[RMDB]
RNA sequence: GGGAACGACUCGAGUAGAGUCGAAAAUGCUCUUACUCUUUUCUGUAAAGAGGAGACUCCUGGACUCGCCGCCCAAGUUCGAGCAUGGGCCAAUUCCGAGCGAAGAGUCCGCGGGGGAAGGAUCAGUGCCCGAGAGGGGAUGAACUGGUAAAGAGGCCCAGGAUAAUAACUUCGGUUAUUAUCCUGGAAAAGAAACAACAACAACAAC
Reactivity to 2A3 in 0.01 (KOAc 150mM, MgCl2 10mM, bicine 150mM(pH8.5), 24C), signal-to-noise 1, nucleotides 027 to 156: u060g000c010u020c020u090u160a300c000u010c000u080u110u230u050c130u240g180u280a040a000a080g000a010g010g000a010g010a000c030u000c000c050u020g000g000a040c000u000c010g100c030c030g000c000c000c000a080a030g040u070u240c160g080a030g060c030a040u070g000g000g000c000c020a050a110u160u130c010c040g100a000g000c040g010a090a010g030a040g020u000c000c000g000c120g000g020g000g010g000a000a140g050g010a040u130c030a020g020u030g090c000c020c040g040a060g030a030g000g000g030g020a020u080g000a030a000c010u020g020g020u110a080a100a120g010a050g110g010c130
The record gives the reactivity of an RNA of 207 nucleotides to 2A3. The RNA was probed in 150 mM KOAc, 10 mM MgCl2 and 150 mM bicine (pH 8.5) at 24 C. Values are in units of 0.01, from 0 to 300, in steps of 10. 2A3 adducts were read by reverse transcription with SuperScript II with manganese. The data come from the RNA Mapping Database (RMDB), library VIROID.